[RMDB]
RNA sequence: GGGAACGACUCGAGUAGAGUCGAAAACACCACGUUGAACAAAGCGAGGAGGCAAAAGAUCUUCAUGUUAAAAUCAAUGGGGUACAGCUCAAAGUUUAUUCGUUUAAAAAAAAGGGGAUCAUUUUGGUGAGGUAAUCACCUUCGGGUGAUUACCUCAAAAAGAAACAACAACAACAAC
Reactivity to 2A3 in 0.01 (KOAc 150mM, MgCl2 10mM, bicine 150mM(pH8.5), 24C), signal-to-noise 1, nucleotides 027 to 126: c000a000c000c000a000c000g030u050u160g060a080a080c160a190a000a050g030c050g050a160g030g050a030g010g000c080a000a160a050a070g160a300u030c000u000u000c000a300u190g240u060u100a300a080a000a000u030c030a000a050u160g000g000g000g220u300a300c300a000g010c080u000c080a070a070a070g000u000u060u130a240u070u300c190g160u120u300u300a090a040a000a000a080a000a000a000g000g000g000g050a050u190c070a110u000u000u000u190g070g000
Conditions: 150 mM KOAc, 10 mM MgCl2 and 150 mM bicine (pH 8.5), 24 C. An RNA of 177 nucleotides, treated with 2A3 and read out base by base. For 2A3 the reverse transcriptase was SuperScript II with manganese. For 2A3, 168 sequencing reads were counted. Source: RMDB library OK1LIB, as collected in RNAgym. Values cover nucleotides 27 to 126.